[RMDB]
RNA sequence: GGGAACGACUCGAGUAGAGUCGAAAACGGAAUCGGCCACGCCAGGCCCAUAGCUCUCGUCGCUGCUGCAACGCCACAGCGUGAACAUCCUUCCGACAGCGCUGGUCAAGUUGGAGACCGGCACGAGCGUAGUAGUCGUCUUCGGACGACUACUACGAAAAGAAACAACAACAACAAC
Reactivity to 2A3 in 0.01 (KOAc 150mM, MgCl2 10mM, bicine 150mM(pH8.5), 24C), signal-to-noise 3, nucleotides 027 to 126: c000g030g120a040a040u240c090g030g000c020c010a040c050g000c000c030a060g010g040c000c000c000a070u140a050g030c020u000c000u010c040g050u030c050g010c010u030g030c010u030g000c040a090a060c050g040c060c010a100c050a050g010c030g000u040g030a020a030c040a060u070c030c000u060u030c000c020g010a010c040a050g040c010g000c050u000g010g010u030c060a110a170g050u010u030g060g030a060g000a060c050c000g000g000c030a040c040g030a020g070
Reactivity to DMS in 0.01 (KOAc 150mM, MgCl2 10mM, bicine 150mM(pH8.5), 24C), signal-to-noise 2, nucleotides 027 to 126: c040g030g010a050a010u000c090g000g020c050c050a090c030g000c000c000a080g000g000c010c020c050a040u010a070g040c130u000c040u000c040g000u000c060g040c030u000g000c060u000g000c010a080a100c090g000c010c110a070c130a090g000c000g020u000g000a110a100c180a020u000c000c080u010u000c040c020g000a160c210a120g010c080g000c020u030g000g000u020c010a040a110g000u010u000g010g000a150g060a020c040c000g050g020c000a010c030g030a060g020
The data come from the RNA Mapping Database (RMDB), library OK1LIB. An RNA of 177 nucleotides, treated with 2A3 and DMS and read out base by base. Reactivities are given for positions 27 through 126. The DMS profile rests on 2,473 reads. The RNA was probed in 150 mM KOAc, 10 mM MgCl2 and 150 mM bicine (pH 8.5) at 24 C.